Notes:
This 177-nucleotide RNA was probed chemically with DMS and 2A3. 2A3 adducts were read by reverse transcription with SuperScript II with manganese.

RNA sequence: GGGAACGACUCGAGUAGAGUCGAAAAGAUAUGGAACGGCCAAGCUUUUGACGCUCUAACGGUCGGAAACGACCGGGAGAGCGAUAAGCUUGGCGUUCCUAAGUCAAAAGAGUGGUUCGCCACUCAAGGUGUAAAAAAUCUUCGGAUUUUUUACACCAAAAGAAACAACAACAACAAC
Reactivity to DMS in 0.01 (KOAc 150mM, MgCl2 10mM, bicine 150mM(pH8.5), 24C), signal-to-noise 2, nucleotides 027 to 126: g010a040u010a300u000g000g010a020a000c010g010g000c000c000a000a010g000c000u000u000u000u020g010a300c110g000c000u020c000u000a060a050c010g000g000u000c000g020g000a070a080a230c000g000a010c000c000g000g000g000a030g000a030g020c010g010a030u010a000a010g000c000u000u010g010g010c000g000u000u000c000c000u000a020a100g000u000c070a090a130a140a100g010a030g030u000g010g010u010u010c220g020c000c010a030c020u010c000a040a040
Reactivity to 2A3 in 0.01 (KOAc 150mM, MgCl2 10mM, bicine 150mM(pH8.5), 24C), signal-to-noise 2, nucleotides 027 to 126: g010a000u050a040u210g010g010a000a000c040g300g090c030c010a010a010g010c030u160u060u100u290g170a120c070g000c010u010c000u000a020a000c000g000g010u010c000g010g010a000a060a030c020g010a010c030c000g000g020g000a010g000a000g000c000g010a000u000a000a000g010c000u000u000g000g020c020g000u010u020c000c000u000a000a000g000u000c020a000a020a220a000g000a020g000u040g050g040u090u200c300g070c090c000a000c000u000c010a010a060
Values cover nucleotides 27 to 126.